[RMDB]
RNA sequence: GGGAACGACUCGAGUAGAGUCGAAAAGUAAUAGAGUAAACAGUUUAAAUUCCUCGUUAAGAAAAGUUCAAACUACUGCUAGUAGUGUAAGUUCAACUAUGACAAAAUUAAGUUCUAGCAUAAAUGCAUACGAUAUCAGUUUCGACUGAUAUCGUAUAAAAGAAACAACAACAACAAC
Reactivity to DMS in 0.01 (KOAc 150mM, MgCl2 10mM, bicine 150mM(pH8.5), 24C), signal-to-noise 5, nucleotides 027 to 126: g010u020a070a110u020a100g000a130g000u020a070a060a120c100a120g020u010u010u010a060a080a180u000u000c040c020u000c110g040u010u020a080a100g010a030a090a060a090g000u010u000c070a060a050a050c040u000a050c110u000g030c080u010a020g010u000a020g010u010g010u010a020a140g030u010u010c110a060a060c060u010a060u020g000a030c080a060a030a090a070u010u050a050a090g000u010u000c020u010a050g020c040a020u020a040a060a110u010g010c170
Reactivity to 2A3 in 0.01 (KOAc 150mM, MgCl2 10mM, bicine 150mM(pH8.5), 24C), signal-to-noise 4, nucleotides 027 to 126: g030u030a010a150u080a080g100a000g100u200a090a090a050c030a100g020u010u040u180a160a180a070u060u050c020c000u050c040g040u030u090a080a020g060a040a130a030a030g050u110u080c020a030a180a060c060u040a030c020u050g120c030u080a030g010u000a020g000u040g070u080a060a080g010u020u090c060a060a040c060u020a090u270g060a030c050a050a100a120a060u180u130a030a110g070u080u000c040u010a000g010c020a010u150a100a170a050u120g080c010